RNA sequence: GGGAACGACUCGAGUAGAGUCGAAAACUCAAUCACUACGGUGAUUGAGAAUGCUUACGCCUCAAUAAAGCUUGAAUUGAGUGCCUCUAGCAGAUAUAGACUGAAACAUUUAGUAUGGUCAAGCAGGGAGCAACAGCUCGAGUACGCUCGAGCUGAAGUCGUGGGAUUUAUUCGUAAAUCCCACGACAAAAGAAACAACAACAACAAC
Reactivity to 2A3 in 0.01 (KOAc 150mM, MgCl2 10mM, bicine 150mM(pH8.5), 24C), signal-to-noise 2, nucleotides 027 to 156: c020u000c000a010a000u000c000a000c030u020a010c200g110g000u000g000a000u020u000g000a010g060a030a080u070g000c000u090u040a020c160g020c010c000u000c010a040a070u060a140a100a060g070c020u040u040g070a010a040u020u000g000a010g030u130g080c000c030u070c010u040a020g000c060a000g090a040u180a020u080a090g120a080c090u150g040a050a190a000c040a020u140u140u050a120g040u050a050u130g070g020u060c020a000a000g000c050a050g110g070g000a110g030c020a010a110c000a010g020c000u000c040g000a000g090u030a030c300g050c090u020c000g000a000g000c010u020g010a010a020